Structure probing data (2A3 and DMS) for a 207-nucleotide construct. High DMS reactivity at an A or C suggests that its Watson-Crick edge is free. For DMS the reverse transcriptase was MarathonRT.

RNA sequence: GGGAACGACUCGAGUAGAGUCGAAAAGAUAUCGGCUGAUGGCUUGUACUUUAACUUGUAAGGAACACCGUUUGCUGUAGCAGAUACUUCACGUGUUACUUCUGCAAAGUAUGCUUCAUCGGUUGAAAGUGCAAGCGAAAUAGCUUGACCAAUUGCCCAUACGCGUAAGCUUCGGCUUACGCGUAUGAAAAGAAACAACAACAACAAC
Reactivity to 2A3 in 0.01 (KOAc 150mM, MgCl2 10mM, bicine 150mM(pH8.5), 24C), signal-to-noise 5, nucleotides 027 to 156: g040a020u060a020u070c010g010g000c010u030g020a090u130g130g000c000u000u020g020u010a000c010u020u010u040a070a030c020u100u180g110u230a090a110g060g030a040a000c020a010c040c110g180u010u050u070g020c020u020g020u050a010g020c060a060g040a130u050a090c030u100u200c140a070c160g050u020g020u070u030a030c020u030u060c020u030g020c010a030a020a000g050u070a060u170g030c030u030u030c000a060u050c020g000g050u050u070g100a040a020a000g030u030g000c000a000a000g000c000g010a010a000a050u060a000g010c010u040u070g030a020c080c030a060a140u070u070g070c000c000
Reactivity to DMS in 0.01 (KOAc 150mM, MgCl2 10mM, bicine 150mM(pH8.5), 24C), signal-to-noise 2, nucleotides 027 to 156: g000a170u000a060u000c020g010g030c000u000g020a160u010g010g020c000u000u000g000u000a020c010u000u000u000a040a030c040u010u010g100u010a060a100g010g000a040a070c020a010c010c090g010u000u010u020g000c020u000g000u000a070g040c040a090g020a170u000a030c050u000u010c170a130c170g040u010g020u000u000a030c010u010u000c050u000g000c020a040a040a140g040u010a060u000g000c050u000u000c020a080u000c060g010g030u000u010g010a040a030a040g010u000g020c000a010a000g020c010g010a080a080a180u000a100g000c000u000u010g020a100c020c050a070a150u010u000g010c090c050